[RMDB]
Source: RMDB library OK3TST, as collected in RNAgym. This 207-nucleotide RNA was probed chemically with 2A3. As a SHAPE reagent, 2A3 marks flexible, mostly unpaired nucleotides at the ribose 2'-OH. Conditions: 150 mM KOAc, 10 mM MgCl2 and 150 mM bicine (pH 8.5), 24 C.
RNA sequence: GGGAACGACUCGAGUAGAGUCGAAAAUUUGCAGAUGGCAAACUCCAAUCAUAAGGCGAUCCUAUCAGGUGAUCCCAGUGUGCCCACUAAGGACUCAGGAGUGAUUUGCAUUCCCGUCUAAGUGUGCAAAAUCUUGCUACUGAACAGGAGGAGAAAAGAGAGUCACUAGUUUCGACUAGUGACUCUCAAAAGAAACAACAACAACAAC
Reactivity to 2A3 in 0.01 (KOAc 150mM, MgCl2 10mM, bicine 150mM(pH8.5), 24C), signal-to-noise 1, nucleotides 027 to 156: u070u070u070g030c040a040g080a250u090g120g050c050a050a050a030c040u000c050c000a120a240u090c080a080u090a150a140g070g000c110g080a030u000c030c030u260a260u130c010a050g000g090u120g050a070u040c000c030c030a020g090u040g020u040g070c010c020c050a020c040u040a070a220g130g000a000c010u020c140a010g040g010a000g000u000g030a060u080u150u240g030c010a010u000u010c000c040c020g000u000c000u120a080a070g000u010g030u040g020c020a000a000a000a180u050c020u040u020g010c000u000a110c010u050g020a050a000c080a050g030g060a020g010g070a020g020a000a050a110a000